[RMDB]
RNA sequence: GGGAACGACUCGAGUAGAGUCGAAAAGCACCAUUUUCAAAUGAUGCAUCCAUGAGCCAAAUAUUUGGAAGAGGGAUAUCCAGUCUAGUGUUCUGUAACCCCCACAUACCAAGGAUGCUGGGCUCAGCGAAUGUUAGAGGUUCGCCUCUAACAUUCGAAAAGAAACAACAACAACAAC
Reactivity to 2A3 in 0.01 (KOAc 150mM, MgCl2 10mM, bicine 150mM(pH8.5), 24C), signal-to-noise 5, nucleotides 027 to 126: g000c000a000c010c010a010u060u040u090u120c150a120a110a040u010g000a020u010g000c010a020u000c010c010a080u070g010a000g000c000c000a060a180a070u180a100u030u040u020g020g040a070a050g080a110g020g000g000a020u040a010u070c050c020a010g030u000c060u180a140g150u120g150u300u070c010u010g050u040a060a070c010c010c010c030c010a040c020a040u130a080c010c000a010a000g020g020a030u040g050c040u050g060g010g000c010u010c010a040g050
Reactivity to DMS in 0.01 (KOAc 150mM, MgCl2 10mM, bicine 150mM(pH8.5), 24C), signal-to-noise 5, nucleotides 027 to 126: g010c000a020c010c000a020u000u000u030u010c280a100a060a010u000g020a030u000g000c010a080u000c020c010a120u000g010a040g010c000c020a040a090a100u010a040u010u000u000g010g010a190a120g000a140g000g000g000a060u000a300u010c170c020a020g010u000c050u010a140g010u010g000u010u000c010u010g000u010a150a150c110c050c000c000c010a080c120a130u010a160c030c040a010a020g000g000a020u090g010c110u000g000g000g000c010u000c020a050g000